[RMDB]
RNA sequence: GGGAACGACUCGAGUAGAGUCGAAAAUUCUGAGACCACGCAUUUUUAUGUCAGGAUGAACGAAGCAGCACACGAACUGUGAAGUUGUGUGGUUGAGAUUUGUUUUGACAGAUUCGGUUCUCCAAAGCCUCUCUGUUUUCUCGGCUUCUUCCAGGAACAUGUGACGUAAAUUCGUUUACGUCACAUGAAAAGAAACAACAACAACAAC
Reactivity to DMS in 0.01 (KOAc 150mM, MgCl2 10mM, bicine 150mM(pH8.5), 24C), signal-to-noise 2, nucleotides 027 to 156: u000u000c030u000g000a190g010a070c010c030a060c110g000c030a050u000u010u020u000u000a050u030g000u000c040a090g030g020a100u000g010a080a070c010g010a170a170g010c020a090g020c000a030c030a030c060g010a050a040c040u000g000u010g010a130a090g030u000u000g030u010g030u000g020g030u000u010g010a120g000a090u000u010u010g010u000u000u000u010g010a080c020a070g030a150u000u010c070g000g000u010u000c040u010c030c060a070a090a100g020c010c010u000c040u000c020u000g010u000u000u010u000c000u010c040g000g000c060u000u010c050u020u000c030c030a170g000g010a100a280
Reactivity to 2A3 in 0.01 (KOAc 150mM, MgCl2 10mM, bicine 150mM(pH8.5), 24C), signal-to-noise 6, nucleotides 027 to 156: u060u030c040u060g060a040g030a070c000c030a050c040g060c040a050u040u050u060u140u260a110u250g040u040c050a050g050g090a110u080g030a050a010c060g020a080a020g060c020a000g020c030a010c020a000c060g110a180a040c040u050g030u070g200a110a030g030u060u020g010u010g020u010g040g030u050u030g030a040g010a050u060u050u080g080u010u080u020u040g010a010c020a000g030a040u070u090c060g020g020u090u040c050u010c070c040a090a100a040g010c000c000u010c000u010c020u010g020u040u050u060u030c040u010c010g030g010c000u080u000c000u100u040c050c020a050g110g030a060a050
Overview
This 207-nucleotide RNA was probed chemically with DMS and 2A3. The reactions ran in a buffer of 150 mM KOAc, 10 mM MgCl2 and 150 mM bicine (pH 8.5), at 24 C. The data come from the RNA Mapping Database (RMDB), library OK3TST.